Notes:
The record gives the reactivity of an RNA of 177 nucleotides to DMS and 2A3. Conditions: 150 mM KOAc, 10 mM MgCl2 and 150 mM bicine (pH 8.5), 24 C. DMS adducts were read by reverse transcription with MarathonRT. Source: RMDB library OK1LIB, as collected in RNAgym. 2A3 adducts were read by reverse transcription with SuperScript II with manganese.
RNA sequence: GGGAACGACUCGAGUAGAGUCGAAAAUCGCCAGACGACGUGGGAUGACGCUCGUUGUCCGCCGCAGCUUCUGGCGACGGCGAGGGUCUUUUAUGGAGCACAGCAUUCGCACCUGCUCGCGUGCCAGACCACCUGGGAUGUUCGCAUCCCAGGUGGUAAAAGAAACAACAACAACAAC
Reactivity to DMS in 0.01 (KOAc 150mM, MgCl2 10mM, bicine 150mM(pH8.5), 24C), signal-to-noise 1, nucleotides 027 to 126: u000c000g030c000c040a030g020a100c040g000a060c000g020u020g000g030g010a110u010g010a000c040g020c090u020c080g040u000u000g000u000c060c080g040c040c010g080c200a140g040c160u000u040c060u040g000g000c000g020a040c030g000g000c040g000a040g000g020g000u000c000u000u000u000u000a010u040g000g000a100g020c010a040c040a220g000c170a150u000u000c030g020c060a030c000c010u000g020c010u000c010g020c050g040u000g000c040c030a160g010
Reactivity to 2A3 in 0.01 (KOAc 150mM, MgCl2 10mM, bicine 150mM(pH8.5), 24C), signal-to-noise 4, nucleotides 027 to 126: u120c030g040c010c030a040g020a080c070g010a000c040g000u120g000g040g010a070u120g010a000c010g020c300u050c090g070u010u020g020u070c060c060g060c000c020g040c040a160g040c060u160u140c120u190g000g020c020g000a000c010g010g000c010g000a030g020g000g000u020c000u010u070u010u030a150u080g040g010a000g000c010a020c030a080g020c000a070u090u110c070g010c030a030c000c030u040g030c010u010c000g050c030g000u030g030c010c010a030g020